Background
The data come from the RNA Mapping Database (RMDB), library OK3TST. The record gives the reactivity of an RNA of 207 nucleotides to DMS and 2A3. For DMS, 1,827 sequencing reads were counted. High 2A3 reactivity points to a flexible backbone, as in loops and unpaired stretches.

RNA sequence: GGGAACGACUCGAGUAGAGUCGAAAAGCGCCAUAGGUGCCGACCGAGUCCGCGGUCCACCAUACCCGCCUCCUCGAGGACCACGGCCAGGGAACACAGAUAAUCCAGGCGGGCCCAGAGGGGACCGAUGGCCAGAGGGGCGCGGACGCCGCGCAGCUAAUAUCUCCUUAUUCGUAAGGAGAUAUUAAAAAGAAACAACAACAACAAC
Reactivity to DMS in 0.01 (KOAc 150mM, MgCl2 10mM, bicine 150mM(pH8.5), 24C), signal-to-noise 1, nucleotides 027 to 156: g020c030g030c050c060a140u000a110g030g040u000g040c020c060g060a110c020c010g000a290g030u000c080c070g070c000g020g000u000c030c020a090c030c010a220u000a070c040c000c030g020c040c000u000c010c000u010c050g030a130g090g010a080c000c030a060c050g040g030c010c000a090g020g010g000a080a110c060a300c060a200g010a150u020a180a160u010c030c060a210g020g060c000g010g000g060c000c010c020a130g010a140g020g010g080g000a010c000c010g020a080u000g000g010c040c020a190g000a070g000g000g000g010c030g000c030g040g020a030c040g010c070c020g020c040g030c050a300g010c090
Reactivity to 2A3 in 0.01 (KOAc 150mM, MgCl2 10mM, bicine 150mM(pH8.5), 24C), signal-to-noise 2, nucleotides 027 to 156: g020c040g000c010c020a080u150a150g060g000u040g050c150c070g020a000c010c000g000a020g110u020c060c080g080c010g050g070u000c000c010a010c000c020a040u120a070c000c000c000g000c010c010u090c000c000u030c010g020a300g080g000a270c030c000a040c050g050g030c040c020a070g000g030g020a030a090c130a000c020a110g090a240u140a250a040u220c070c000a070g050g000c060g010g040g110c010c000c000a020g040a040g040g070g000g000a020c010c020g120a160u030g000g000c000c000a000g010a020g060g000g000g000c070g030c040g000g000a000c030g040c100c020g000c000g000c030a010g000c010